[RMDB]
The record gives the reactivity of an RNA of 207 nucleotides to DMS and 2A3.
RNA sequence: GGGAACGACUCGAGUAGAGUCGAAAAUACCUCUUCGGAGGUAACGUUAGGGGUCGACGACAUGUGCGUUCCGACGAUCGUACUGAAGCCUCCACGGUACGGGAGGGACGCACAACAGCGUCGACGGAGGCACCCGAUUGAUCUCAUUCGUGAGAAAGUAUAUAUUGAUGUUCGCAUCAAUAUAUACAAAAGAAACAACAACAACAAC
Reactivity to DMS in 0.01 (KOAc 150mM, MgCl2 10mM, bicine 150mM(pH8.5), 24C), signal-to-noise 3, nucleotides 027 to 156: u000a020c010c000u000c030u000u010c300g050g000a020g020g010u010a020a020c080g000u000u000a050g020g030g020g020u000c020g030a060c030g020a080c040a300u000g000u020g000c010g020u000u020c000c010g030a130c250g000a090u000c010g010u000a020c020u000g000a060a100g010c020c000u000c000c010a300c010g010g020u010a010c000g000g000g030a050g020g020g010a010c000g030c020a030c010a000a020c070a150g000c000g020u000c000g000a030c010g000g010a040g060g030c040a300c000c010c030g020a180u000u010g010a100u000c000u010c010a070u000u020c240g030u010g010a020g000a060a110a300
Reactivity to 2A3 in 0.01 (KOAc 150mM, MgCl2 10mM, bicine 150mM(pH8.5), 24C), signal-to-noise 5, nucleotides 027 to 156: u070a000c000c000u000c000u040u070c230g160g010a000g010g000u010a060a050c100g050u080u210a150g030g000g030g000u030c010g010a020c000g020a100c010a040u000g000u000g000c000g000u000u000c010c010g020a060c010g000a070u010c000g000u010a000c000u010g050a150a040g010c000c000u000c020c000a010c000g000g010u000a000c010g000g000g000a010g000g000g010a010c000g000c020a000c000a000a000c000a010g110c000g010u000c010g010a020c010g000g010a000g000g010c020a040c000c000c020g030a060u060u250g100a070u010c010u000c010a120u170u160c170g100u050g020a030g010a020a080a030
Annotation:
For 2A3 the reverse transcriptase was SuperScript II with manganese. For DMS the reverse transcriptase was MarathonRT. Values are in units of 0.01, from 0 to 300, in steps of 10.